[RMDB]
RNA sequence: GGGAACGACUCGAGUAGAGUCGAAAAAUGGAUAUUGGCUGUGGCACUGGGCUGAGUGGAAGUUAUCUGUCAGAUGAAGGGCACUAUUGGGUGGGCCUGGAUAUCAGCCCUGCCAUGCUGGAUGAGAGUCGAUUUUAGGUUUCGACCUAAAAUCGACAAAAGAAACAACAACAACAAC
Reactivity to 2A3 in 0.01 (KOAc 150mM, MgCl2 10mM, bicine 150mM(pH8.5), 24C), signal-to-noise 2, nucleotides 027 to 126: a000u150g060g050a030u090a050u210u080g030g010c080u070g000u020g050g010c000a010c170u050g020g000g040c010u000g010a020g060u110g000g110a080a020g110u210u160a120u140c040u030g250u190c000a060g020a140u050g040a040a020g000g010g040c020a040c090u080a150u290u270g270g000g090u100g020g070g060c010c010u010g000g000a010u000a010u010c010a000g010c000c000c000u000g000c020c010a000u000g020c000u020g060g020a060u100g060a080g000a040
Reactivity to DMS in 0.01 (KOAc 150mM, MgCl2 10mM, bicine 150mM(pH8.5), 24C), signal-to-noise 2, nucleotides 027 to 126: a090u010g000g010a090u000a060u020u020g000g000c040u010g030u010g010g000c020a030c240u020g040g010g030c000u000g000a060g000u020g020g010a100a080g030u000u000a050u000c070u000g020u010c130a090g020a070u000g000a300a110g010g010g020c010a010c080u000a170u000u030g010g000g000u000g010g000g050c020c010u000g010g000a140u010a090u000c020a060g010c010c000c000u000g020c020c010a010u020g010c040u000g000g010a050u010g000a220g000a160